Notes
Source: RMDB library RSTRND, as collected in RNAgym. An RNA of 207 nucleotides, treated with 2A3 and read out base by base.

[RMDB]
RNA sequence: GGGAACGACUCGAGUAGAGUCGAAAAGUGGUUGAUCAGUUGGCCACGUAAAAAGCUGAUCAAAAACUUUUAGUUGCAGAAGAAAACUUUGCACUGGCCGCCUAAUUACAGGUAGCCCGGACUGAUGGGGAUCGCCGAUGUCGCCUGAAUGUCCGUCGCUCUUAGUUCAGUUCGCUGAACUAAGAGCAAAAGAAACAACAACAACAAC
Reactivity to 2A3 in 0.01 (KOAc 150mM, MgCl2 10mM, bicine 150mM(pH8.5), 24C), signal-to-noise 2, nucleotides 027 to 156: g000u000g000g030u040u020g050a020u000c000a010g010u040u050g140g000c080c000a100c120g010u080a030a100a100a010a030g000c010u000g000a010u010c000a010a000a000a000a050c040u060u070u060u060a090g030u100u040g000c050a010g020a090a010g080a090a160a130a120c070u050u110u070g010c000a020c020u030g000g000c010c010g040c000c000u130a270a190u260u180a160c070a060g000g000u040a000g000c010c010c000g000g000a010c010u040g010a040u030g000g000g000g000a010u010c040g070c170c050g090a130u160g020u000c030g160c120c000u030g010a070a010u120g000u000c000c010g020u010c010

The 2A3 profile rests on 677 reads.